[RMDB]
RNA sequence: GGGAACGACUCGAGUAGAGUCGAAAAUGCAAUUAGUUCGCUAAUUGCACAUGUCUAGUCGCUAGAAAACGAUCAAAACUACCGACUAGACUUUAUUGAUCGGGGGCCUGGCUUUCGAGCCAGGCAAUACAUCUUUCAGAUUCGUCUGAAAGAUGUAAAAAGAAACAACAACAACAAC
Reactivity to 2A3 in 0.01 (KOAc 150mM, MgCl2 10mM, bicine 150mM(pH8.5), 24C), signal-to-noise 4, nucleotides 027 to 126: u040g000c000a000a000u000u010a000g020u020u030c160g020c110u000a000a000u000u020g030c000a010c020a040u100g000u000c000u000a000g010u000c000g030c030u000a020g060a100a240a030a040c130g100a180u170c080a020a030a040a150c010u010a010c020c000g010a000c000u000a000g000a000c000u010u030u020a050u020u070g100a060u100c040g000g000g000g090g010c000c000u000g000g010c010u040u050u110c140g020a000g000c000c000a000g010g000c000a000a010
Reactivity to DMS in 0.01 (KOAc 150mM, MgCl2 10mM, bicine 150mM(pH8.5), 24C), signal-to-noise 7, nucleotides 027 to 126: u000g000c000a020a010u000u000a010g010u000u010c230g030c000u000a000a000u000u000g000c000a030c180a060u010g010u000c000u000a000g010u000c010g030c200u000a010g000a070a050a120a130c120g000a070u010c090a050a050a110a140c020u000a010c210c000g000a010c000u000a010g000a010c010u000u000u000a040u000u010g000a050u000c040g010g000g010g010g010c000c000u000g000g000c000u000u000u010c150g010a020g020c000c000a010g000g000c020a010a010
The data come from the RNA Mapping Database (RMDB), library M2PK50. This 177-nucleotide RNA was probed chemically with 2A3 and DMS. The RNA was probed in 150 mM KOAc, 10 mM MgCl2 and 150 mM bicine (pH 8.5) at 24 C. The 2A3 profile rests on 6,278 reads. Reactivities are given for positions 27 through 126.